[RMDB]
This 207-nucleotide RNA was probed chemically with DMS and 2A3. High 2A3 reactivity points to a flexible backbone, as in loops and unpaired stretches. For 2A3, 445 sequencing reads were counted. 2A3 adducts were read by reverse transcription with SuperScript II with manganese.
RNA sequence: GGGAACGACUCGAGUAGAGUCGAAAAAUAUCGGAAGGGGUUCGUCUUUGCGGAUUUUGACUUUAUCUUUCGUGAAGAACCAGAAUUUAUCAGAGACAUUUCCGCUCUCGAAAAAGAAGGCGUCUCAUUUUUGAGGAGAAAAAGGUUCAAAUGUGGAUCAUAAGAGGCAGUUCGCUGCCUCUUAUGAAAAAGAAACAACAACAACAAC
Reactivity to DMS in 0.01 (KOAc 150mM, MgCl2 10mM, bicine 150mM(pH8.5), 24C), signal-to-noise 1, nucleotides 027 to 156: a160u020a070u010c030g010g030a080a050g010g010g060g000u000u000c080g020u000c010u030u000u000g000c090g040g030a100u000u000u000u000g010a070c030u000u020u000a030u010c100u010u000u010c110g050u020g010a050a200g000a030a090c080c030a150g010a090a040u000u000u020a050u000c060a080g010a120g020a030c020a180u010u000u000c010c020g000c050u010c020u010c030g000a020a040a030a070a140g030a040a040g010g000c070g070u010c010u010c030a190u000u000u000u010u010g000a080g050g020a170g000a070a020a070a100a070g010g020u000u000c040a040a090a140u000g000u000g040g020a180
Reactivity to 2A3 in 0.01 (KOAc 150mM, MgCl2 10mM, bicine 150mM(pH8.5), 24C), signal-to-noise 1, nucleotides 027 to 156: a000u060a060u100c020g010g010a000a020g060g010g000g000u060u130c040g000u010c020u050u030u060g000c050g040g020a080u080u000u000u130g050a030c000u150u300u040a100u090c020u040u050u050c030g000u030g030a040a010g010a120a020c030c050a060g040a020a050u140u130u070a090u230c030a010g000a000g000a050c010a060u060u170u090c050c100g000c050u000c030u030c000g110a100a100a000a000a040g090a040a000g000g030c000g090u000c000u000c040a030u040u140u140u220u120g000a030g000g000a030g000a090a220a020a040a010g080g000u020u110c040a050a050a050u040g010u090g030g000a000